[RMDB]
RNA sequence: GGGAACGACUCGAGUAGAGUCGAAAAAGCGAGGAGCUACGGCUCCUCGCACCCCCGCUUGACCGAGGCCCCCAUCGUGCACACGCAGUAAACUACCACCGAUAGGGGACACGUUCAAGCCGGGGAAGUACUAUGAAUGUUUCGACAUUCAUAGUACAAAAGAAACAACAACAACAAC
Reactivity to 2A3 in 0.01 (KOAc 150mM, MgCl2 10mM, bicine 150mM(pH8.5), 24C), signal-to-noise 7, nucleotides 027 to 126: a000g010c000g000a000g000g000a000g010c010u020a020c200g070g000c000u000c000c000u000c000g000c000a000c000c000c000c000c000g000c000u000u000g000a010c030c000g070a180g060g030c000c000c000c000c000a000u010c000g040u070g060c100a060c010a020c220g080c050a050g050u190a070a140a100c090u140a110c040c050a020c020c050g000a010u060a140g000g000g000g000a010c000a010c000g000u000u000c000a000a010g000c020c040g000g000g000g010a030a030
Reactivity to DMS in 0.01 (KOAc 150mM, MgCl2 10mM, bicine 150mM(pH8.5), 24C), signal-to-noise 3, nucleotides 027 to 126: a040g010c010g030a050g010g020a030g060c030u000a080c230g020g020c010u000c000c000u000c000g000c000a010c100c000c000c000c300g010c020u000u000g000a010c050c000g000a140g000g000c000c000c000c000c020a010u010c000g020u000g050c060a060c180a110c180g020c080a050g000u020a040a130a080c080u010a060c110c040a110c070c010g000a020u000a090g010g000g020g000a020c020a060c010g020u010u000c010a010a030g000c020c140g020g000g000g010a040a060